[RMDB]
RNA sequence: GGGAACGACUCGAGUAGAGUCGAAAAAAAUCACCACUCUCGCGUGCCGACCAUGUCCUGACAAGGGGAAGGCCACAUCGCGGGCGUCGCUAUGGGCGAGACGCCAGCGGACGCGGCGGAGUCUGAGAAUAAUUCUUGAUUUCGAUCAAGAAUUAUUAAAAGAAACAACAACAACAAC
Reactivity to DMS in 0.01 (KOAc 150mM, MgCl2 10mM, bicine 150mM(pH8.5), 24C), signal-to-noise 9, nucleotides 027 to 126: a030a060a080u020c060a100c030c030a150c040u000c010u000c010g000c020g010u000g010c030c020g010a260c030c030a110u020g010u020c030c030u000g000a110c240a110a080g000g000g010g010a070a190g000g000c020c120a070c120a070u020c010g010c000g000g000g010c010g010u000c010g010c060u010a090u030g010g010g010c040g010a090g000a040c010g010c010c000a040g010c000g000g010a040c040g010c030g000g010c110g000g000a060g010u000c070u010g000a170g010
Reactivity to 2A3 in 0.01 (KOAc 150mM, MgCl2 10mM, bicine 150mM(pH8.5), 24C), signal-to-noise 9, nucleotides 027 to 126: a000a000a010u130c050a050c030c000a020c010u030c000u050c010g020c010g040u070g020c010c020g030a050c010c010a090u160g090u120c010c030u100g080a100c080a120a090g050g010g010g020a050a030g030g000c030c010a040c010a030u070c020g000c000g020g000g000c000g010u020c000g000c030u110a220u300g100g140g010c030g020a060g020a010c010g000c010c000a000g000c000g000g010a020c020g010c000g050g030c080g040g010a010g030u010c060u100g100a080g060